[RMDB]
RNA sequence: GGGAACGACUCGAGUAGAGUCGAAAAGAUAUGGAGCAGAAGUCAGCAACAGCCUGCUCUCGGAAACGAGAGUCAGGACAUGCUGUCACUGCUCCUAAGUCAAAACUCGUAUGUUCGCAUACGAGAACCUGCGUAUAGUGUUCGCACUAUACGCAGGAAAAGAAACAACAACAACAAC
Reactivity to 2A3 in 0.01 (KOAc 150mM, MgCl2 10mM, bicine 150mM(pH8.5), 24C), signal-to-noise 3, nucleotides 027 to 126: g030a000u040a010u100g000g000a010g000c010a000g030a300a070g110u050c010a010g000c090a120a130c050a180g050c020c000u000g020c000u040c010u000c000g000g020a000a050a020c000g000a000g020a000g160u230c070a000g000g010a010c010a100u290g010c000u000g000u010c000a000c000u010g020c050u000c000c000u000a010a000g000u010c040a000a020a100a140c010u000c000g000u000a000u010g040u070u120c300g000c170a000u010a000c000g000a010g000a010a040
Reactivity to DMS in 0.01 (KOAc 150mM, MgCl2 10mM, bicine 150mM(pH8.5), 24C), signal-to-noise 2, nucleotides 027 to 126: g050a050u000a300u020g000g010a020g010c000a010g040a150a220g000u000c010a010g010c000a120a070c290a190g010c030c000u000g000c000u000c000u000c010g020g000a060a050a100c000g010a000g010a020g010u100c040a000g000g010a010c070a140u010g040c000u000g010u010c010a140c010u000g000c000u000c000c000u000a010a040g010u010c020a150a140a060a100c020u000c000g010u000a020u000g010u000u020c170g010c000a000u000a000c000g000a030g010a030a030
Structure probing data (2A3 and DMS) for a 177-nucleotide construct. Reactivities are given for positions 27 through 126. Conditions: 150 mM KOAc, 10 mM MgCl2 and 150 mM bicine (pH 8.5), 24 C. Source: RMDB library TTRDES, as collected in RNAgym.